[RMDB]
RNA sequence: GGGAACGACUCGAGUAGAGUCGAAAAGCGCGCACCCUCACAGCGCGCGGCCUGGACAGCAGCAUUGGGAGCAAUCAGCGCGGCCAGAGCGCUGGGUUCAGGACGACGGAGAUGUCUCAGGCAAUGGGAUUACGUAUCCAUUCGUGGAUACGUAAUCAAAAGAAACAACAACAACAAC
Reactivity to DMS in 0.01 (KOAc 150mM, MgCl2 10mM, bicine 150mM(pH8.5), 24C), signal-to-noise 7, nucleotides 027 to 126: g000c010g010c010g020c010a140c050c010c030u000c200a060c180a140g000c010g010c010g010c000g000g010c010c010u000g000g010a020c020a050g010c050a130g010c060a110u010u010g000g010g000a090g010c040a090a110u010c030a040g010c020g000c010g010g020c100c140a090g000a150g020c020g010c000u000g010g000g010u000u000c030a090g020g010a120c060g000a080c060g000g010a140g000a110u000g010u000c010u020c010a020g000g010c030a120a090u010g000g010
Reactivity to 2A3 in 0.01 (KOAc 150mM, MgCl2 10mM, bicine 150mM(pH8.5), 24C), signal-to-noise 6, nucleotides 027 to 126: g000c010g000c000g000c000a090c030c030c020u220c040a070c030a040g010c010g000c000g010c000g020g010c010c010u010g000g010a020c010a030g070c010a010g020c050a130u060u180g060g010g030a050g020c030a020a140u180c020a040g020c010g000c020g070g070c100c050a060g030a010g080c020g000c010u020g020g010g000u040u030c020a020g060g110a090c030g020a020c030g070g040a160g020a090u060g020u000c050u030c200a010g010g000c000a010a090u250g090g040